[RMDB]
RNA sequence: GGGAACGACUCGAGUAGAGUCGAAAAGCGUCCUCGUUCGCGAGGACGCAAAAUAGCCAUUUGGAUCGAUGGCUUAACGAUCCGAAAAGUACUAAAGUACAAAAACCCCACUCUUCGGAGUGGGGAACUACUUGUCGUAGUUCGCUACGACAAGUAGAAAAGAAACAACAACAACAAC
Reactivity to DMS in 0.01 (KOAc 150mM, MgCl2 10mM, bicine 150mM(pH8.5), 24C), signal-to-noise 2, nucleotides 027 to 126: g000c000g000u000c000c010u010c020g030u000u000c260g020c030g020a010g000g000a000c000g020c010a000a020a090a060u000a180g010c000c030a160u000u000u000g020g000a050u000c050g020a160u000g000g020c070u010u000a070a070c030g010a010u000c010c000g000a060a060a110a150g030u000a040c010u000a080a110a210g000u000a010c030a060a070a090a090a090c030c000c000c000a000c010u000c010u000u040c130g040g010a010g020u010g000g000g000g020a000a010
Reactivity to 2A3 in 0.01 (KOAc 150mM, MgCl2 10mM, bicine 150mM(pH8.5), 24C), signal-to-noise 2, nucleotides 027 to 126: g000c010g000u010c000c000u000c000g030u030u070c200g010c000g090a000g030g010a000c010g020c010a000a000a000a000u030a010g020c000c000a050u050u040u220g040g020a000u050c010g010a040u100g080g000c020u030u010a140a030c020g000a000u000c010c000g000a090a120a030a060g020u010a010c020u210a220a090a060g010u020a030c050a040a080a040a120a120c020c000c000c010a010c000u000c010u040u110c250g120g010a000g000u010g000g000g000g000a000a000